Source: RMDB library OK1LIB, as collected in RNAgym. This 177-nucleotide RNA was probed chemically with DMS and 2A3. Values cover nucleotides 27 to 126.

[RMDB]
RNA sequence: GGGAACGACUCGAGUAGAGUCGAAAAAAUAGAGAAUGUAUAUCUAUGGAUUACAAACAAACACAAUUGUGUUUAAUUGGUUGCAAACCACCUAUAGGGGAACACUGGGGCAAAGGAUCCCCAUGUAAUAUAUAGGUGAAUUCGUUCACCUAUAUAUAAAAGAAACAACAACAACAAC
Reactivity to DMS in 0.01 (KOAc 150mM, MgCl2 10mM, bicine 150mM(pH8.5), 24C), signal-to-noise 9, nucleotides 027 to 126: a100a020u010a030g010a050g000a130a110u020g010u030a080u050a090u010c010u010a020u020g000g000a300u010u010a090c060a020a050a100c170a030a020a010c010a010c020a300a080u040u030g010u000g000u000u000u010a050a120u020u000g000g010u010u000g010c140a060a050a130c030c010a070c030c010u000a190u010a070g010g000g000g000a050a040c040a040c050u010g000g000g010g030c160a050a070a050g020g010a070u010c000c000c000c000a020u030g010u020a080
Reactivity to 2A3 in 0.01 (KOAc 150mM, MgCl2 10mM, bicine 150mM(pH8.5), 24C), signal-to-noise 9, nucleotides 027 to 126: a000a020u190a020g040a020g050a130a170u200g030u150a150u050a030u210c020u040a070u080g070g010a050u110u130a060c050a050a100a020c040a030a030a000c020a010c030a180a300u300u300g010u010g020u010u050u060a130a160u090u090g060g020u030u060g100c060a080a070a040c010c010a020c010c010u070a070u110a120g010g020g010g030a050a010c020a000c070u020g000g020g040g050c080a120a080a060g130g010a100u040c000c000c000c000a000u070g010u010a060
For DMS, 25,523 sequencing reads were counted.